Source: RMDB library M2RFPK, as collected in RNAgym. Structure probing data (DMS and 2A3) for a 207-nucleotide construct. For 2A3, 5,647 sequencing reads were counted. The RNA was probed in 150 mM KOAc, 10 mM MgCl2 and 150 mM bicine (pH 8.5) at 24 C. The DMS profile rests on 2,825 reads. 2A3 is a SHAPE reagent: it acylates the 2'-hydroxyl of flexible nucleotides of all four kinds.

RNA sequence: GGGAACGACUCGAGUAGAGUCGAAAAAGAGCCGGAUACGUCCGGCUCAACGGGGGAUACGUGUGGUUCCGUCCGCUCCCCCUAUGGCAUAACAAAUGCACCACACACUAGGCUACGGCCUAGUGAAAAAAGGUGUAUGUGUUCGCACAUACACCAACUCUUAUACUAUCUUCGGAUAGUAUAAGAGAAAAGAAACAACAACAACAAC
Reactivity to DMS in 0.01 (KOAc 150mM, MgCl2 10mM, bicine 150mM(pH8.5), 24C), signal-to-noise 1, nucleotides 027 to 156: a150g010a040g060c010c000g010g010a050u000a050c250g050u000c000c000g010g030c030u000c000a000a000c090g020g020g000g040g020a060u000a030c010g000u030g020u000g020g020u000u000c050c020g030u010c080c020g030c060u000c010c000c000c040c000u000a020u000g010g010c000a090u000a140a160c090a070a070a070u010g000c020a120c050c020a080c040a120c000a000c000u010a030g010g010c000u000a140c300g090g000c000c010u010a000g000u000g000a000a010a050a050a070a050g000g010u000g020u000a000u000g060u000g020u000u000c300g060c080a030c000a030u000a030c000a000c000c000a010a020
Reactivity to 2A3 in 0.01 (KOAc 150mM, MgCl2 10mM, bicine 150mM(pH8.5), 24C), signal-to-noise 5, nucleotides 027 to 156: a000g000a000g000c000c000g020g010a010u030a040c140g100u020c000c000g000g010c010u000c010a000a000c000g000g000g000g000g010a030u080a200c080g070u080g020u050g080g030u120u130c070c050g060u040c020c020g030c030u020c000c000c000c010c000u030a130u150g080g000c020a030u040a220a060c060a150a170a030u050g000c040a040c060c010a030c010a000c000a000c040u000a000g000g000c000u020a010c300g080g000c000c000u000a010g000u010g000a060a000a000a000a000a010g000g000u000g000u010a000u000g010u000g000u020u070c160g040c040a000c000a000u000a000c000a000c000c000a000a030